Chemical mapping of a 177-nucleotide RNA with 2A3 and DMS. The DMS profile rests on 34,787 reads. DMS adducts were read by reverse transcription with MarathonRT.
RNA sequence: GGGAACGACUCGAGUAGAGUCGAAAAUCAUGCUAUCACGAGCUAACUGGGUCUCGAUCAGUUAGUGGUGAGCGAAAGUUCACCUUGUGUCAAUGAUCGAGACGUUGACGCAAUCGUGAUAGCAUGCCUAGACGAAUCUAUUCGUAGAUUCGUCUAGAAAAGAAACAACAACAACAAC
Reactivity to 2A3 in 0.01 (KOAc 150mM, MgCl2 10mM, bicine 150mM(pH8.5), 24C), signal-to-noise 8, nucleotides 027 to 126: u110c000a000u000g000c000u000a000u000c000a000c000g000a000g000c000u010a020a020c010u010g020g010g110u050c050u040c100g070a090u040c000a000g010u000u030a010g010u010g010g000u000g000a000g000c010g020a080a010a000g000u000u000c000a000c000c000u000u020g030u000g010u000c010a010a030u020g030a110u110c060g080a020g010a070c000g020u000u000g010a010c010g000c000a010a040u010c000g000u000g000a000u000a000g000c000a000u000g000c000
Reactivity to DMS in 0.01 (KOAc 150mM, MgCl2 10mM, bicine 150mM(pH8.5), 24C), signal-to-noise 9, nucleotides 027 to 126: u010c010a000u000g000c000u000a000u000c000a000c000g010a020g000c010u000a030a040c010u000g010g000g010u000c080u000c160g000a080u010c000a010g000u000u000a020g020u000g010g010u000g000a010g010c000g000a110a080a170g010u000u000c000a000c000c000u000u000g010u000g000u000c040a030a030u000g000a090u010c140g000a110g000a070c020g010u000u000g000a050c060g010c020a020a030u000c000g010u000g000a010u000a010g000c000a000u000g000c300
Record summary:
The RNA was probed in 150 mM KOAc, 10 mM MgCl2 and 150 mM bicine (pH 8.5) at 24 C. For 2A3 the reverse transcriptase was SuperScript II with manganese.